[RMDB]
RNA sequence: GGGAACGACUCGAGUAGAGUCGAAAAUGUCUUUGUAUUUGCGCUGGCCUUAUAGCUCUUGUUGCCUGCAGUCAAUUUAGGGCUUUGAUGUGUCACGUUUAUCAUGGCUACAUUGAAUGCGCCUGUGCGGGACGAUGCUAUUCGUAGCAUCGUCCCGAAAAGAAACAACAACAACAAC
Reactivity to 2A3 in 0.01 (KOAc 150mM, MgCl2 10mM, bicine 150mM(pH8.5), 24C), signal-to-noise 2, nucleotides 027 to 126: u200g040u020c010u010u090u170g050u020a200u040u000u070g040c000g000c090u050g040g020c000c000u050u010a100u150a150g020c000u000c020u020u030g010u000u060g010c020c220u120g000c070a120g000u090c020a040a060u050u190u060a000g000g000g000c000u120u010u110g010a030u100g020u000g020u000c010a000c060g070u000u000u110a170u060c080a120u020g040g000c030u020a000c000a000u000u130g100a080a000u140g040c000g120c000c030u100g020u140g030